[RMDB]
RNA sequence: GGGAACGACUCGAGUAGAGUCGAAAAUAGAGGAUAUUGAUUAUGUACCCCUAAAAUCUGCAGUCUGUAUUACAGCUUGUAAUUUAGGGGGCGCUGUUUGUAGGAAGCAUGCUACAGAGUACAGAGACAUUAACUGAUUGUUCGCAAUCAGUUAAUGAAAAGAAACAACAACAACAAC
Reactivity to 2A3 in 0.01 (KOAc 150mM, MgCl2 10mM, bicine 150mM(pH8.5), 24C), signal-to-noise 6, nucleotides 027 to 126: u110a010g050a040g030g050a020u050a040u130u120g060a040u150u150a060u170g080u260a210c000c000c000c000u010a010a020a010a090u060c090u030g000c000a000g040u020c000u010g040u040a190u160u250a060c000a000g000c000u020u030g010u030a020a030u000u000u020a000g000g010g000g020g010c020g020c000u070g010u080u150u030g020u020a010g000g060a070a030g080c040a030u100g020c000u010a020c010a020g050a010g040u020a030c000a030g050a000g020a050
Reactivity to DMS in 0.01 (KOAc 150mM, MgCl2 10mM, bicine 150mM(pH8.5), 24C), signal-to-noise 6, nucleotides 027 to 126: u000a050g010a100g000g010a090u010a050u000u010g010a100u010u000a070u000g020u000a120c010c000c000c000u000a020a020a040a040u010c210u010g000c000a020g010u010c010u010g000u000a140u000u000a070c010a010g000c020u010u010g010u000a030a040u000u000u000a050g010g000g010g000g020c100g020c050u000g010u000u010u000g020u000a050g000g010a100a100g020c120a050u010g010c040u000a050c040a050g000a100g020u000a040c070a050g000a150g000a190